[RMDB]
RNA sequence: GGGAACGACUCGAGUAGAGUCGAAAACACUGACUAGUUCGCUAGUCAGUGAAAAAGAUAUGGACGACGCCAGGGAGCUCACCGUCGGAAACGACGGAAGAGCAUCGAUCUGGUCGUCGUCCUAAGUCAAAAACUAUGUACCUUCGGGUACAUAGAAUCAGUAGUGACUAUUCGUAGUCACUACUGAAAAAGAAACAACAACAACAAC
Reactivity to DMS in 0.01 (KOAc 150mM, MgCl2 10mM, bicine 150mM(pH8.5), 24C), signal-to-noise 2, nucleotides 027 to 156: c000a010c000u020g040a040c000u000a020g000u000u000c300g010c000u020a010g000u000c000a010g010u020g010a020a030a040a110a070g000a110u000a190u000g000g000a040c000g020a020c010g000c010c010a070g010g010g000a060g030c000u000c000a280c010c000g000u000c000g040g000a210a100a150c010g020a010c010g000g020a010a070g050a020g040c030a110u010c120g020a090u000c010u000g000g040u010c020g020u000c000g040u000c000c000u000a000a100g030u000c030a070a090a110a070a220c000u000a000u010g000u000a020c000c000u010u000c280g060g010g020u000a000c000a000u010a000g000a120a110
Reactivity to 2A3 in 0.01 (KOAc 150mM, MgCl2 10mM, bicine 150mM(pH8.5), 24C), signal-to-noise 3, nucleotides 027 to 156: c000a000c000u000g000a000c000u000a000g020u070u080c210g040c100u010a010g000u020c000a000g000u000g010a030a000a000a000a000g020a020u030a000u060g000g000a000c010g000a000c000g000c010c010a030g060g040g050a060g000c000u000c000a020c000c000g000u000c000g010g000a030a020a010c010g010a000c010g010g020a040a040g010a000g000c010a030u190c060g080a160u030c000u000g010g030u090c020g010u000c000g010u000c000c000u000a000a000g000u000c020a000a000a040a050a080c000u020a000u030g000u000a000c010c000u030u090c300g110g000g000u000a000c000a000u000a000g000a000a080